The record gives the reactivity of an RNA of 207 nucleotides to 2A3. Values cover nucleotides 27 to 156.
[RMDB]
RNA sequence: GGGAACGACUCGAGUAGAGUCGAAAAAUUAAAUGUAGUCAUAGGGGACUGAGGAGCAAGGGUGGCCUUGAAGAGGCCAAAGGAAUGUCCAUUUGCUGAGUUUCCCUUCCUUAUGUCUCCAGUCUGGUGCCAGGUAGUGGAGUAAAAAAGGAGACAGGUCGUUCCACGUCUUCGGACGUGGAACGACAAAAGAAACAACAACAACAAC
Reactivity to 2A3 in 0.01 (KOAc 150mM, MgCl2 10mM, bicine 150mM(pH8.5), 24C), signal-to-noise 1, nucleotides 027 to 156: a030u130u060a070a040a040u180g020u060a060g020u070c090a100u070a060g010g010g110g030a020c040u030g020a030g060g070a030g000c080a080a020g030g000g000u000g040g000c030c000u060u100g090a240a170g020a050g090g000c010c010a000a000a000g130g050a170a040u070g030u100c060c000a130u090u020u000g060c090u040g020a050g060u030u020u020c000c000c000u000u010c010c020u120u040a150u220g000u010c000u000c000c000a010g000u000c000u030g010g000u100g050c060c010a030g050g050u030a020g060u030g020g100a030g100u070a030a050a000a000a000a080g070g000a030g000a000c030a010g000